[RMDB]
An RNA of 177 nucleotides, treated with 2A3 and DMS and read out base by base. For 2A3, 4,740 sequencing reads were counted.
RNA sequence: GGGAACGACUCGAGUAGAGUCGAAAACGGAUACGGCCUUCUGGGGAAGGGUGAGGGAACUGGAGGAGAAGAUCACCGAAUAUCUCGAGGGGGCUCAGUUGCGCGACGCCUUCAGGACCGUGUUCGCACGACUGAAUCUUUUCGAAGAUUCAGUCGUAAAAGAAACAACAACAACAAC
Reactivity to 2A3 in 0.01 (KOAc 150mM, MgCl2 10mM, bicine 150mM(pH8.5), 24C), signal-to-noise 3, nucleotides 027 to 126: c010g010g030a020u010a050c010g030g000c030c010u070u110c050u080g050g000g030g070a050a040g090g040g030u040g010a100g040g060g020a040a040c030u070g050g070a050g020g030a060g030a100a010g050a050u050c010a030c100c020g030a110a060u110a080u080c030u020c020g020a120g000g020g000g000g010c010u020c010a010g020u050u110g060c120g000c010g040a050c030g040c020c000u080u120c030a020g020g030a050c000c010g010u000g030u040u020c020g000c020
Reactivity to DMS in 0.01 (KOAc 150mM, MgCl2 10mM, bicine 150mM(pH8.5), 24C), signal-to-noise 3, nucleotides 027 to 126: c040g020g000a050u020a050c080g030g030c020c020u000u000c110u010g020g000g000g010a110a070g000g010g020u010g010a150g000g010g010a100a090c060u000g000g020a080g000g010a100g000a090a090g010a070u010c110a120c060c070g020a100a070u000a120u000c040u000c020g000a110g010g000g000g000g000c060u020c030a040g000u000u000g000c030g000c110g000a100c170g000c040c030u010u010c060a040g020g000a050c050c030g000u000g000u010u000c010g010c150
For DMS, 2,798 sequencing reads were counted. High 2A3 reactivity points to a flexible backbone, as in loops and unpaired stretches.